RNA sequence: GGGAACGACUCGAGUAGAGUCGAAAAAGGCAGUUGGAUGGCAACCAUCAGGGGCCAGAUUAACACGAAAUGAGGAGGAUUCCGGAAGUUAACGCACAAAAGGAGGAUCAGGGCGCAGAUUUUCCGCGUUACGAUAAUCUUUCGAGAUUAUCGUAACAAAAGAAACAACAACAACAAC
Reactivity to 2A3 in 0.01 (KOAc 150mM, MgCl2 10mM, bicine 150mM(pH8.5), 24C), signal-to-noise 8, nucleotides 027 to 126: a000g080g010c040a030g030u080u070g060g030a070u050g020g000c040a080a120c040c010a080u120c070a050g020g000g020g010c010c000a010g010a100u070u120a070a020c040a010c100g070a050a060a100u160g010a070g040g010a030g030g020a040u090u010c010c000g010g020a030a010g010u060u080a070a020c040g000c060a030c050a070a050a040a020g040g020a030g010g020a030u050c040a020g030g010g000c030g000c020a010g010a060u060u030u020u000c010c010g030c030
Reactivity to DMS in 0.01 (KOAc 150mM, MgCl2 10mM, bicine 150mM(pH8.5), 24C), signal-to-noise 8, nucleotides 027 to 126: a080g000g010c050a050g010u000u010g010g000a080u000g010g000c030a090a100c070c040a080u010c130a090g000g000g000g000c030c030a060g000a110u020u000a060a060c070a080c110g010a060a060a060u010g000a090g000g010a070g000g000a110u010u000c030c030g010g010a070a070g000u000u000a030a060c110g020c080a090c140a030a040a110a080g000g010a060g010g000a050u000c040a070g000g000g010c050g000c070a080g000a090u010u010u000u000c010c010g020c230